[RMDB]
RNA sequence: GGGAACGACUCGAGUAGAGUCGAAAAUGCUAUUCGUAGCAGAAAUGACCUUUGUGACUUGACAUGUUUGUCAGGAAGUUCACAACCCAUUGGGUUGUGUCUUCCUUGGAUUUAACAUGCAAUGAGUCACUCUGGUGGGCUAGCCUUUCGAGGCUAACGCGCCUUAUAGUUUCGACUAUAAGGCGCGAAAAGAAACAACAACAACAAC
Reactivity to 2A3 in 0.01 (KOAc 150mM, MgCl2 10mM, bicine 150mM(pH8.5), 24C), signal-to-noise 4, nucleotides 027 to 156: u050g000c000u020a040u050u140c260g110u050a020g000c020a010g110a030a160a050u270g050a030c010c000u030u020u030g000u000g000a010c000u040u020g080a090c010a020u000g000u000u010u030g020u000c000a000g000g000a000a010g040u220u110c000a000c000a010a010c020c020c110a300u180u300g000g000g010u000u010g000u000g000u000c000u000u000c000c000u000u070g000g000a030u120u150u200a000a000c000a000u000g000c020a030a090u210g010a020g000u000c010a020c010u000c010u000g000g020u050g030g040g030c070u060a010g000c010c000u110u110u090c250g120a040g000g000c000u000a080a030
Reactivity to DMS in 0.01 (KOAc 150mM, MgCl2 10mM, bicine 150mM(pH8.5), 24C), signal-to-noise 2, nucleotides 027 to 156: u000g020c000u000a040u000u000c170g080u000a050g000c000a040g010a050a130a150u030g010a100c000c010u000u000u000g040u000g000a030c000u020u020g000a180c010a020u000g000u000u000u020g010u020c010a040g000g030a020a000g030u000u020c010a000c000a020a000c010c010c030a300u000u000g100g040g020u000u010g050u010g030u000c000u000u010c000c020u000u000g020g020a040u000u010u000a010a030c010a000u010g010c010a070a140u000g010a050g020u000c000a020c000u010c040u000g000g020u000g020g010g060c040u000a060g000c000c000u000u000u000c220g010a060g030g000c010u010a020a090
This 207-nucleotide RNA was probed chemically with 2A3 and DMS.
Reactivities are given for positions 27 through 156.
For DMS the reverse transcriptase was MarathonRT.
The DMS profile rests on 4,447 reads.